Conditions: 150 mM KOAc, 10 mM MgCl2 and 150 mM bicine (pH 8.5), 24 C. This 177-nucleotide RNA was probed chemically with 2A3 and DMS. For 2A3 the reverse transcriptase was SuperScript II with manganese. The data come from the RNA Mapping Database (RMDB), library M2PK90. High 2A3 reactivity points to a flexible backbone, as in loops and unpaired stretches.

[RMDB]
RNA sequence: GGGAACGACUCGAGUAGAGUCGAAAAGAAAAUAAAGCGUACGAAGAUGGACGUACGCAAGCAGUGCGUACCAGAAUCGCACAUCCAGCGCUCUAAGGUGAGCGCAAAACCUAAUAAUAGAAAAAAAGUAACUAUAAGUGUUCGCACUUAUAGUUACAAAAGAAACAACAACAACAAC
Reactivity to 2A3 in 0.01 (KOAc 150mM, MgCl2 10mM, bicine 150mM(pH8.5), 24C), signal-to-noise 2, nucleotides 027 to 126: g000a000a040a020a020u180a060a070a000g010c020g000u010a010c010g070a070a080g120a190u250g070g000a000c010g010u010a000c000g000c000a000a000g000c050a020g000u010g040c000g000u060a150c070c040a030g070a040a030u050c010g000c010a010c010a000u010c030c020a040g020c000g000c000u000c010u060a040a220g260g060u060g050a010g000c000g000c040a000a020a000a040c040c020u080a150a090u240a280a030u160a220g100a040a090a000a030a000a060a080
Reactivity to DMS in 0.01 (KOAc 150mM, MgCl2 10mM, bicine 150mM(pH8.5), 24C), signal-to-noise 1, nucleotides 027 to 126: g000a060a160a120a070u000a030a170a100g000c000g010u010a010c020g030a130a110g020a130u000g000g040a250c010g000u000a000c000g040c010a050a030g010c280a100g010u040g000c000g020u000a140c030c080a100g000a170a120u010c000g010c000a000c000a150u000c130c110a130g000c000g000c000u000c050u000a110a230g010g040u000g000a040g000c000g010c000a010a010a040a080c090c010u020a120a060u080a090a060u010a230g000a020a000a040a090a010a000a060